[RMDB]
RNA sequence: GGGAACGACUCGAGUAGAGUCGAAAAUGUUCCGGAUUCGUCCGGAACAAAAUAUGGCACCGGUACUCGUCGAUACAAUGCCACGGAGAUGGACCGGGUGAUAAACCACUUAGUUCGCUAAGUGGAACUUAAACACACUGUUCGCAGUGUGUUUAAGAAAAGAAACAACAACAACAAC
Reactivity to DMS in 0.01 (KOAc 150mM, MgCl2 10mM, bicine 150mM(pH8.5), 24C), signal-to-noise 6, nucleotides 027 to 126: u010g010u000u000c000c000g000g000a040u000u010c190g020u000c000c000g000g000a000a000c000a020a030a090a090u010a070u000g000g000c040a080c020c010g010g000u000a050c040u000c030g010u000c050g010a160u010a100c160a070a100u010g010c150c150a040c040g000g010a170g000a050u000g010g000a070c020c000g010g000g010u000g000a060u000a050a110a170c010c000a000c000u000u000a010g010u000u010c170g010c000u000a000a010g010u000g010g000a040a030
Reactivity to 2A3 in 0.01 (KOAc 150mM, MgCl2 10mM, bicine 150mM(pH8.5), 24C), signal-to-noise 4, nucleotides 027 to 126: u060g000u000u000c010c000g000g000a050u060u080c200g050u000c020c000g000g000a000a000c000a000a000a000a000u150a060u040g100g000c040a050c080c010g010g000u040a070c040u030c090g080u010c010g030a020u080a260c080a250a140u160g090c040c020a030c040g080g010a100g020a050u050g010g040a010c000c000g030g000g010u020g030a050u120a050a080a050c010c000a000c000u010u010a010g020u030u040c220g020c140u000a000a000g010u000g000g000a000a000